[RMDB]
An RNA of 177 nucleotides, treated with DMS and 2A3 and read out base by base. For 2A3 the reverse transcriptase was SuperScript II with manganese. The data come from the RNA Mapping Database (RMDB), library TTRDES.

RNA sequence: GGGAACGACUCGAGUAGAGUCGAAAAGAUAUGGAAGUGUGUAUUAGCAUCGAUCUGGAGUCGGAAACGACUCCAGGGAGCUAAAUACCACUUCCUAAGUCAAAACUGUUAACUUCGGUUAACAGAACAUAUUACUGCCCUUCGGGGCAGUAAUAUGAAAAGAAACAACAACAACAAC
Reactivity to DMS in 0.01 (KOAc 150mM, MgCl2 10mM, bicine 150mM(pH8.5), 24C), signal-to-noise 2, nucleotides 027 to 126: g010a020u000a300u010g000g010a010a010g030u000g020u030g030u000a010u000u000a040g020c000a300u000c200g000a060u020c000u000g000g000a000g020u000c000g010g000a090a110a200c020g010a010c000u000c000c000a000g000g000g000a020g020c020u000a020a020a050u000a020c010c000a020c010u010u010c000c000u020a000a100g010u010c030a080a070a130a230c020u000g000u000u000a000a020c010u000u020c210g030g000u000u000a000a000c010a000g000a160a210
Reactivity to 2A3 in 0.01 (KOAc 150mM, MgCl2 10mM, bicine 150mM(pH8.5), 24C), signal-to-noise 1, nucleotides 027 to 126: g010a000u020a030u120g000g030a000a010g030u000g000u040g010u060a030u060u130a090g030c040a070u300c060g000a020u000c020u000g000g010a000g000u000c000g000g000a000a040a000c020g000a000c010u000c000c000a000g010g000g000a020g000c000u070a150a040a020u030a020c010c000a000c000u010u000c000c010u010a000a000g000u010c020a010a000a220a230c010u000g000u000u000a020a000c000u080u100c300g140g010u010u010a020a000c000a000g010a030a000